[RMDB]
RNA sequence: GGGAACGACUCGAGUAGAGUCGAAAACGUGUUCAAUGACAGGUCUUAUUAUUAGCGAGAUACGAUUAAGCCUUGUCUAGCGGCUUGAUAAGAGAUUGAUAGACUCGCAGUUUCUAGACUUGAGUUAUGUGUCGAGGGGUUGUUAAAAUAAUACAUACAGAUAUCGUCAGUUCGCUGACGAUAUCUGAAAAGAAACAACAACAACAAC
Reactivity to 2A3 in 0.01 (KOAc 150mM, MgCl2 10mM, bicine 150mM(pH8.5), 24C), signal-to-noise 2, nucleotides 027 to 156: c020g000u070g030u120u080c090a070a070u190g040a030c020a020g000g040u000c070u040u150a080u090u000a020u030u140a110g030c010g010a010g000a010u080a100c040g000a030u010u090a000a000g000c000c010u060u070g050u050c030u050a030g030c000g010g020c000u000u030g000a040u050a110a030g040a000g020a050u050u170g030a030u120a200g130a030c010u000c000g000c000a010g030u050u110u060c080u030a020g000a030c000u110u020g010a020g100u110u010a090u120g070u000g000u040c050g030a020g000g050g020g040u000u090g010u020u100a090a190a040a020u090a050a050u140a070c060a020u200a010